Notes
An RNA of 177 nucleotides, treated with 2A3 and DMS and read out base by base. 2A3 adducts were read by reverse transcription with SuperScript II with manganese. The data come from the RNA Mapping Database (RMDB), libraries RFM100 and RFMREP. Reactivities are given for positions 27 through 126. Conditions: 150 mM KOAc, 10 mM MgCl2 and 150 mM bicine (pH 8.5), 24 C. DMS adducts were read by reverse transcription with MarathonRT.
[RMDB]
RNA sequence: GGGAACGACUCGAGUAGAGUCGAAAAUCCCCAUGGGGGCCCAGUGUGCAAUGGCUGCAGAUAGCAGCCUCCUUGGUAGUGUAUGCAACCUGUUGCCUGUACAGGUUGCCCUAAGGGACCUUGGAGAAUUUUAGUAUUCAUUCGUGAAUACUAAAAUAAAAGAAACAACAACAACAAC
Reactivity to 2A3 in 0.01 (KOAc 150mM, MgCl2 10mM, bicine 150mM(pH8.5), 24C), signal-to-noise 9, nucleotides 027 to 126: u000c000c000c000c020a130u150g040g010g000g040g030c020c020c040a070g070u100g030u050g100c060a080a120u130g030g000c000u010g000c010a020g110a300u190a100g020c000a000g000c000c000u020c000c000u020u060g100g000u050a070g040u030g060u140a120u190g000c010a000a000c000c000u010g010u030u080g080c040c080u110g040u050a000c000a000g000g000u000u000g000c010c000c000u030a050a060g040g010g020a020c000c010u010u020g040g000a090g060a020
Reactivity to DMS in 0.01 (KOAc 150mM, MgCl2 10mM, bicine 150mM(pH8.5), 24C), signal-to-noise 8, nucleotides 027 to 126: u010c020c000c000c150a110u010g010g010g010g000g010c020c020c030a110g010u020g010u010g000c120a090a070u010g010g010c010u000g010c000a160g010a140u020a150g000c000a020g000c010c000u000c010c010u000u000g000g000u000a060g010u010g010u020a090u020g000c010a010a010c000c000u000g000u000u010g010c120c070u010g000u010a080c000a010g000g000u000u000g000c000c110c030u010a110a110g010g010g010a060c010c010u000u000g000g000a060g010a160